The record gives the reactivity of an RNA of 177 nucleotides to DMS and 2A3. DMS adducts were read by reverse transcription with MarathonRT. The RNA was probed in 150 mM KOAc, 10 mM MgCl2 and 150 mM bicine (pH 8.5) at 24 C. Source: RMDB library M2PK90, as collected in RNAgym. For 2A3 the reverse transcriptase was SuperScript II with manganese. The 2A3 profile rests on 1,643 reads. The DMS profile rests on 2,735 reads.

RNA sequence: GGGAACGACUCGAGUAGAGUCGAAAAGGGGUUAGCGUUUGCAAAACGCUGUUAUUGCAAUGAUCUGGAUUUAGCGCAAGUAGGUCCGAAAUCCAGAUCAACAUUUCGGACCUCGGCGCUAAUAAAACCGUACCAUAGGUUUCGACCUAUGGUACGGAAAAGAAACAACAACAACAAC
Reactivity to DMS in 0.01 (KOAc 150mM, MgCl2 10mM, bicine 150mM(pH8.5), 24C), signal-to-noise 3, nucleotides 027 to 126: g020g010g000g020u020u000a020g010c020g020u000u000u000g020c240a060a050a030a020c020g020c010u000g000u000u000a050u000u010g030c050a050a080u000g010a080u000c050u000g000g010a230u000u010u000a000g000c000g030c000a050a110g040u000a020g000g010u000c010c000g030a010a020a010u000c150c120a130g010a110u010c190a030a060c180a070u000u000u000c000g000g010a030c010c000u000c030g020g010c000g000c000u000a000a000u000a060a050a070a130
Reactivity to 2A3 in 0.01 (KOAc 150mM, MgCl2 10mM, bicine 150mM(pH8.5), 24C), signal-to-noise 1, nucleotides 027 to 126: g020g000g020g000u030u060a030g010c030g000u010u040u140g110c040a120a050a070a030c020g000c060u010g060u050u090a180u080u100g030c110a070a080u140g010a070u070c040u080g090g010a090u010u010u010a010g010c000g000c020a090a080g050u140a000g160g020u000c000c000g000a010a010a000u050c140c030a040g000a060u040c000a000a000c000a030u010u010u000c020g000g000a000c000c000u000c000g010g010c000g000c030u010a010a000u020a010a020a000a020